[RMDB]
RNA sequence: GGGAACGACUCGAGUAGAGUCGAAAAGAUAUGGAACGUCCCUGAGCAACAGCCCACGGCGAUCGGAAACGAUCGUUGGGACAUGCUCUGGGACGUUCCUAAGUCAAAACUUGGGUUCGCCCAAGAACACACUAGUGCAGUUCGCUGCACUAGUGUGAAAAGAAACAACAACAACAAC
Reactivity to DMS in 0.01 (KOAc 150mM, MgCl2 10mM, bicine 150mM(pH8.5), 24C), signal-to-noise 3, nucleotides 027 to 126: g010a030u010a300u010g000g010a010a010c010g000u010c000c010c010u000g000a010g010c000a030a100c260a200g000c000c000c000a100c300g010g000c000g000a000u010c000g010g000a080a120a290c000g000a000u000c010g050u000u010g000g010g010a000c050a190u000g000c000u000c000u000g000g000g020a000c000g000u020u000c000c000u030a020a100g000u000c000a120a080a120a150c010u000u000g000g000g000u000u020c290g020c000c000c020a010a010g000a160a230
Reactivity to 2A3 in 0.01 (KOAc 150mM, MgCl2 10mM, bicine 150mM(pH8.5), 24C), signal-to-noise 2, nucleotides 027 to 126: g010a010u060a050u080g000g010a030a000c020g010u010c020c000c010u000g020a000g000c000a010a170c050a140g090c050c010c010a160c160g130g000c020g000a010u010c000g020g070a120a090a040c040g010a010u020c000g000u040u000g000g000g000a010c030a060u120g020c000u010c020u000g010g010g050a000c000g010u000u000c000c000u000a010a000g000u000c000a010a020a100a160c000u000u000g040g000g030u100u170c250g190c010c000c000a010a010g010a030a020